[RMDB]
RNA sequence: GGGAACGACUCGAGUAGAGUCGAAAAGUCGGGGUAAACGGCAGCGAACAGACUUAGCACCCGGUACUGUGGGGUCAGGGGAGGAAGCACCGGACAGGCGGCGAAGUUGGCACCUGUUCCCCGAAAGGCUAUGUUAGAACUUCGGUUCUAACAUAGCAAAAGAAACAACAACAACAAC
Reactivity to DMS in 0.01 (KOAc 150mM, MgCl2 10mM, bicine 150mM(pH8.5), 24C), signal-to-noise 1, nucleotides 027 to 126: g010u020c020g030g010g050g000u020a020a060a130c080g010g010c070a130g030c040g000a110a030c040a130g000a170c070u000u020a110g020c050a090c090c020c020g000g000u000a070c150u010g020u000g040g000g000g000u020c110a150g030g000g030g000a110g030g010a070a080g010c030a060c060c050g000g000a030c070a060g000g000c040g020g000c030g000a060a060g000u000u020g020g020c020a220c000c000u000g020u000u000c010c010c000c040g000a090a140a060g010

Structure probing data (DMS) for a 177-nucleotide construct. Values cover nucleotides 27 to 126. For DMS, 667 sequencing reads were counted. Reactivities are rounded to 0.1 and cut off at 0 and 3. Conditions: 150 mM KOAc, 10 mM MgCl2 and 150 mM bicine (pH 8.5), 24 C.